RNA sequence: GGGAACGACUCGAGUAGAGUCGAAAAGAUAUGGACCAGGACAUGAAGUAUAUCGGAAACGAUAUAUUUCAACAGCCUGUGUCCUAAGUCAAAUCAUCAGACCAUGGUUCGCCAUGGUCUGAUGAAAUCAUAAUCUCCGGUUCGCCGGAGAUUAUGAAAAAGAAACAACAACAACAAC
Reactivity to 2A3 in 0.01 (KOAc 150mM, MgCl2 10mM, bicine 150mM(pH8.5), 24C), signal-to-noise 1, nucleotides 027 to 126: g010a010u030a050u140g020g000a000c010c020a020g020g020a030c120a180u090g000a010a020g000u000a000u000a000u000c000g020g000a050a060a010c000g000a000u000a010u000a010u020u000u000c010a050a010c030a030g050c010c010u050g080u100g020u050c000c010u040a130a010g050u010c040a020a000a300u030c000a010u000c000a020g000a010c030c000a000u000g020g040u110u110c300g050c110c000a000u000g000g000u000c000u000g010a000u000g000a000a000a000
Reactivity to DMS in 0.01 (KOAc 150mM, MgCl2 10mM, bicine 150mM(pH8.5), 24C), signal-to-noise 3, nucleotides 027 to 126: g000a050u000a300u010g000g010a000c000c000a010g000g000a040c050a190u000g000a010a010g010u000a000u000a000u000c000g000g020a110a100a120c000g000a010u000a000u000a000u000u000u000c000a010a070c240a220g000c010c000u000g000u020g010u000c000c010u010a010a060g000u000c030a090a070a160u000c000a000u010c010a000g010a010c000c000a010u000g000g000u000u020c210g010c000c000a010u000g000g000u000c010u000g000a000u000g000a000a050a070

Source: RMDB library TTRDEL, as collected in RNAgym.
Structure probing data (2A3 and DMS) for a 177-nucleotide construct.
For 2A3, 2,220 sequencing reads were counted.
High DMS reactivity at an A or C suggests that its Watson-Crick edge is free.
Values cover nucleotides 27 to 126.
DMS adducts were read by reverse transcription with MarathonRT.
2A3 adducts were read by reverse transcription with SuperScript II with manganese.